[RMDB]
RNA sequence: GGGAACGACUCGAGUAGAGUCGAAAAGGAGGCUGUAGCUGUGGCCACAGGGGUGGGGCUCCUGCCUGCUCCAUGGAGUAGAAGGCCUGGUUCCACAGUCACAACUUGGGCAGCUGUGGCUGCACCAGGGAAGCUCCUUCCCCACCAAUCUGGAAGAGGGAUUUAUUAUGUUCGCAUAAUAAAUCCCAAAAGAAACAACAACAACAAC
Reactivity to 2A3 in 0.01 (KOAc 150mM, MgCl2 10mM, bicine 150mM(pH8.5), 24C), signal-to-noise 2, nucleotides 027 to 156: g020g000a040g050g090c070u030g050u110a030g000c000u020g010u080g030g030c020c000a050c060a010g000g030g030g020u070g030g000g020g020c020u080c030c020u120g020c020c010u020g000c020u000c070c000a120u280g090g020a010g000u100a050g030a130a040g030g050c000c000u000g010g000u140u070c050c020a040c010a000g000u030c030a020c010a100a070c020u070u120g030g070g000c020a010g000c030u060g040u120g190g030c020u000g010c010a120c010c000a000g010g000g020a050a010g010c000u000c010c000u020u140c050c040c000c000a020c000c020a000a080u040c080u100g050g070a080a010g020a140

Conditions: 150 mM KOAc, 10 mM MgCl2 and 150 mM bicine (pH 8.5), 24 C. Chemical mapping of a 207-nucleotide RNA with 2A3. 2A3 adducts were read by reverse transcription with SuperScript II with manganese.